[RMDB]
RNA sequence: GGGAACGACUCGAGUAGAGUCGAAAAGAUAUGGAAUGUCUACGACAUGCUCGCGACUCGGAAACGAGUCCUGAGCAACAGCGUAGGACAUUCCUAAGUCAAAGAGACGGUGUUCGCACCGUCUCAACGUUAUCGAUCCGUUCGCGGAUCGAUAACGAAAAGAAACAACAACAACAAC
Reactivity to DMS in 0.01 (KOAc 150mM, MgCl2 10mM, bicine 150mM(pH8.5), 24C), signal-to-noise 2, nucleotides 027 to 126: g000a010u000a200u000g000g000a040a000u000g000u010c000u020a000c000g020a070c080a230u000g000c000u000c020g030c300g010a010c000u000c000g030g000a010a070a100c000g000a050g000u000c020c000u000g010a010g030c000a050a030c300a060g000c060g010u000a020g000g020a000c010a000u000u000c000c000u010a000a060g000u000c020a120a110a180g000a020g030a000c020g010g000u000g010u000u010c300g000c000a000c000c000g000u010c010u000c000a040a050
Reactivity to 2A3 in 0.01 (KOAc 150mM, MgCl2 10mM, bicine 150mM(pH8.5), 24C), signal-to-noise 1, nucleotides 027 to 126: g000a000u010a010u090g000g050a000a000u000g000u050c010u000a010c010g090a070c080a210u300g000c000u000c010g100c080g000a010c010u010c040g030g000a020a050a020c000g000a000g000u000c010c000u000g000a000g050c000a010a030c030a020g020c000g010u040a110g050g040a000c010a000u000u050c000c030u000a020a000g030u000c030a120a000a230g020a000g000a000c000g010g010u070g090u080u150c300g030c170a020c000c000g000u030c000u000c000a010a000
This 177-nucleotide RNA was probed chemically with DMS and 2A3. The data come from the RNA Mapping Database (RMDB), library TTRDES.